RNA sequence: GGGAACGACUCGAGUAGAGUCGAAAAGGGGCUGACUUGGAUUUCGACAGAUUUCUUGUCGCACAGAUAGCAUGCCAAGCGCUGCUUGUAAAACAGCAACAAAAAUAACUGUAAACAACACAGAUUACGCUCCAGCUUACGCUAAAGCUGCGUGAGUCAGUAGAGUAACGUUCGCGUUACUCUACUGAAAAGAAACAACAACAACAAC
Reactivity to 2A3 in 0.01 (KOAc 150mM, MgCl2 10mM, bicine 150mM(pH8.5), 24C), signal-to-noise 5, nucleotides 027 to 156: g030g000g000g010c010u040g020a190c010u070u040g050g030a060u090u100u130c040g010a010c020a030g070a140u110u180u050c060u050u070g010u000c010g010c060a040c010a060g140a040u090a020g040c060a050u140g010c010c000a030a030g030c040g000c030u020g010c010u050u050g110u090a050a080a040a030c020a010g010c020a020a030c030a060a150a040a020a020u110a070a050c020u040g010u060a050a140a110c050a020a020c030a020c010a050g030a060u060u140a030c080g000c010u000c010c010a010g000c010u020u030a010c010g010c060u050a100a080a190g060c060u020g000c030g010u010g000a030g050u050
Reactivity to DMS in 0.01 (KOAc 150mM, MgCl2 10mM, bicine 150mM(pH8.5), 24C), signal-to-noise 1, nucleotides 027 to 156: g020g000g040g050c010u000g020a090c020u000u000g020g000a130u000u000u000c050g030a060c010a050g000a250u000u000u000c110u000u010g020u000c000g040c100a140c090a100g000a190u000a050g010c030a060u000g020c020c010a100a090g010c060g010c030u000g010c050u020u010g020u000a070a130a080a300c060a120g010c000a090a300c080a060a070a000a020a140u020a100a100c050u000g040u000a180a100a090c060a080a060c080a000c050a060g020a150u010u000a060c110g010c010u020c000c030a100g000c060u000u000a060c030g010c020u000a060a120a120g030c040u000g020c030g010u000g000a080g010u000
The data come from the RNA Mapping Database (RMDB), library ARCHII. The record gives the reactivity of an RNA of 207 nucleotides to 2A3 and DMS. The RNA was probed in 150 mM KOAc, 10 mM MgCl2 and 150 mM bicine (pH 8.5) at 24 C. For 2A3, 2,903 sequencing reads were counted. The DMS profile rests on 1,693 reads. DMS (dimethyl sulfate) methylates the pairing face of unpaired adenines and cytosines. For 2A3 the reverse transcriptase was SuperScript II with manganese.